[RMDB]
RNA sequence: GGGAACGACUCGAGUAGAGUCGAAAACUUCCUCCAUAAUUCUUACACCAUCUUCUUCUUCUCCAUCUUUCCAUUACACGCAUCAACAGAAAUCUCCAAGACCCGACAGUUUCAAGAUCUCACCUCUCAGAACGAUAUCAUUCGUGAUAUCGUUCUGAAAAGAAACAACAACAACAAC
Reactivity to DMS in 0.01 (KOAc 150mM, MgCl2 10mM, bicine 150mM(pH8.5), 24C), signal-to-noise 2, nucleotides 027 to 126: c170u010u010c000c000u000c090c060a070u020a030a070u000u010c020u000u000a170c100a110c000c060a090u000c030u000u000c020u000u000c040u000u020c000u000c020c050a070u000c060u000u000u000c010c030a070u050u010a100c080a060c040g040c040a010u000c120a050a080c090a160g000a050a060a110u000c040u000c030c030a090a080g020a100c030c030c020g000a120c110a070g000u000u010u010c060a050a050g000a060u000c010u000c020a070c060c020u010c120u000
Reactivity to 2A3 in 0.01 (KOAc 150mM, MgCl2 10mM, bicine 150mM(pH8.5), 24C), signal-to-noise 9, nucleotides 027 to 126: c020u040u020c000c010u060c020c000a090u110a130a160u180u060c040u050u070a030c020a030c050c000a050u030c000u050u010c000u060u010c000u050u020c010u010c020c010a070u030c010u030u050u000c010c010a050u060u090a050c080a010c070g050c020a050u040c030a060a090c010a050g080a060a100a020u030c030u010c030c020a050a050g030a070c010c010c010g030a040c020a030g010u030u020u060c050a070a020g010a070u010c010u010c040a050c010c010u040c000u000